This 307-nucleotide RNA was probed chemically with 2A3 and DMS. Source: RMDB library POS240, as collected in RNAgym.
RNA sequence: GGGAACGACUCGAGUAGAGUCGAAAAACUACGCUCAUGAUACGUCAUGAGCGUAGAAAUUACCCCACUUCCCAAAGCCAUGUCCUGAGGUGCCCGUGUGUCCUUGGCACAUACCAUCCAUCACGGUGGUUCUUGUCAUGUAGGGAUUGAAUCCAUAGGAUCUCCACUUUGAACUGCACAGUAGGCAGCCUCCUUGGGGUCUGCAUUUUGCCACGGGGGACACUGAGAUUUGGAGAAAGACGACGGACCAUACGUGGUCCGUCGUCAUGUUCCCAUUCGUGGGAACAAAAAGAAACAACAACAACAAC
Reactivity to 2A3 in 0.01 (KOAc 150mM, MgCl2 10mM, bicine 150mM(pH8.5), 24C), signal-to-noise 3, nucleotides 027 to 266: a000c000u000a000c000g000c010u000c000a000u020g000a010u030a060c170g040u000c020a010u000g000a010g000c010g000u010a010g000a000a010a000u060u050a020c010c020c020c000a070c040u060u040c010c000c000a050a030a030g020c000c030a020u020g000u010c020c030u130g110a090g100g030u070g070c000c000c020g040u020g000u020g040u060c030c020u020u020g020g020c010a030c000a060u110a020c000c000a020u010c050c020a130u130c070a050c130g000g000u000g020g000u010u030c050u070u010g020u020c020a050u060g110u160a110g020g050g020a020u030u140g050a080a040u020c080c060a140u140a080g040g040a090u070c020u040c040c020a150c040u150u080u100g100a200a030c010u140g060c040a050c020a140g240u210a140g070g050c030a060g060c010c000u040c000c040u070u130g000g000g000g020u000c010u020g020c000a090u040u040u210u300g040c040c020a020c030g020g000g000g030g030a000c010a010c060u040g050a040g040a200u040u040u070g070g030a140g100a090a100a060g020a060c000g020a000c030g020g000a030c050c000a020u060a080c190g060u050g030g010u000c000c000g000u000c000g000u000c000a000
Reactivity to DMS in 0.01 (KOAc 150mM, MgCl2 10mM, bicine 150mM(pH8.5), 24C), signal-to-noise 3, nucleotides 027 to 266: a130c000u010a000c000g000c000u010c010a000u000g020a040u000a110c170g020u010c000a010u000g000a030g000c010g030u000a000g000a010a050a060u020u000a160c070c000c000c080a180c240u000u000c010c000c020a150a140a140g000c030c030a080u000g000u000c000c050u010g010a140g020g010u000g020c040c020c040g010u000g010u010g010u000c050c040u000u000g010g000c010a030c220a090u010a060c000c010a020u000c000c200a120u030c230a150c290g020g000u000g020g000u000u010c140u000u020g020u010c010a040u000g010u010a090g010g000g000a040u000u010g020a120a200u010c050c050a060u020a190g010g000a040u000c010u000c000c020a070c110u000u010u000g010a140a170c100u000g010c020a050c130a100g000u000a100g000g010c020a040g000c040c060u000c040c130u010u010g010g000g000g000u010c030u000g000c030a090u010u010u010u010g000c000c040a040c060g000g030g000g000g010a080c040a020c100u010g000a120g010a040u000u010u000g000g010a140g000a070a090a130g030a030c040g030a030c060g060g010a050c020c010a100u000a080c120g040u000g050g040u010c000c020g030u000c040g010u000c000a010